[RMDB]
RNA sequence: GGGAACGACUCGAGUAGAGUCGAAAACAAUGAACUGUUCGCAGUUCAUUGCACGCCCGGGUAGCUCAGCUGGUAGAGCACGUGACUGAAAAUCACGGUGUCGGUGGUUCGACUCCGCCCCCGGGCACCAUUACAUUAUUAGUUUCGACUAAUAAUGAUACGCAAUUACAUUCGUGUAAUUGCGUAUAAAAGAAACAACAACAACAAC
Reactivity to DMS in 0.01 (KOAc 150mM, MgCl2 10mM, bicine 150mM(pH8.5), 24C), signal-to-noise 2, nucleotides 027 to 156: c000a010a000u010g010a030a000c010u010g010u000u000c290g030c020a010g020u000u000c010a010u010u000g010c000a090c040g020c020c000c000g000g010g020u000a070g040c000u000c000a120g000c060u010g020g040u000a060g010a020g110c010a190c010g020u010g020a020c000u000g010a100a070a090a300u000c000a020c010g030g010u000g050u010c030g020g030u000g000g020u000u000c010g020a300c040u000c010c040g000c010c000c020c010c000g020g010g070c000a000c010c000a040u000u000a300c000a020u000u000a000u000u000a010g000u000u000u000c250g030a080c000u000a010a020u010a000a010u000g020
Reactivity to 2A3 in 0.01 (KOAc 150mM, MgCl2 10mM, bicine 150mM(pH8.5), 24C), signal-to-noise 4, nucleotides 027 to 156: c000a000a010u000g000a000a010c000u010g030u090u100c260g020c110a000g000u000u000c000a000u000u000g000c030a030c130g000c000c000c000g000g000g000u010a010g000c000u000c020a020g040c150u190g120g200u180a000g010a000g000c000a000c000g000u000g010a020c040u100g070a140a080a030a050u010c000a000c000g000g040u150g030u120c000g000g000u010g000g000u000u000c000g000a000c000u000c000c000g010c000c000c000c000c000g000g000g010c000a000c000c000a000u040u070a030c000a010u000u000a000u000u000a000g010u020u040u120c170g070a010c010u000a000a000u000a000a010u000g010